[RMDB]
This 177-nucleotide RNA was probed chemically with DMS and 2A3. Source: RMDB library M2PK90, as collected in RNAgym. Values cover nucleotides 27 to 126.

RNA sequence: GGGAACGACUCGAGUAGAGUCGAAAAUAAAACAGUGCGUGGUAGCACUACCAUGACCAUGUUUCGGCACAUGGUCAGCCGAGUACAGCUUCGCCUGAACUCAGCGAACAACAACAACAACAAAAAAGUGACAACAUAUCUUCGGAUAUGUUGUCACAAAAGAAACAACAACAACAAC
Reactivity to DMS in 0.01 (KOAc 150mM, MgCl2 10mM, bicine 150mM(pH8.5), 24C), signal-to-noise 1, nucleotides 027 to 126: u000a040a080a120a090c140a010g000u010g030c000g040u000g050g010u010a230g050c000a020c030u010a110c070c070a170u000g000a000c000c010a000u010g000u000u000u000c190g000g020c230a150c010a010u000g000g010u000c000a020g050c010c050g010a000g050u000a110c010a060g010c000u020u000c250g020c110c000u000g000a060a020c010u000c030a020g000c000g010a170a040c010a040a060c040a010a020c000a020a000c040a020a050c070a020a060a040a050a010a060
Reactivity to 2A3 in 0.01 (KOAc 150mM, MgCl2 10mM, bicine 150mM(pH8.5), 24C), signal-to-noise 1, nucleotides 027 to 126: u120a010a060a020a030c060a030g020u000g010c050g080u070g210g200u150a050g000c000a010c000u010a040c000c000a090u100g000a000c000c000a010u000g040u000u060u180c100g080g030c110a000c000a000u000g000g010u030c000a000g020c000c020g000a010g000u030a040c010a010g000c010u140u240c130g050c050c040u000g000a020a010c010u020c040a010g030c010g070a020a000c000a000a000c010a000a000c000a000a000c010a060a000c070a020a050a090a000a020a020
Description
The RNA was probed in 150 mM KOAc, 10 mM MgCl2 and 150 mM bicine (pH 8.5) at 24 C.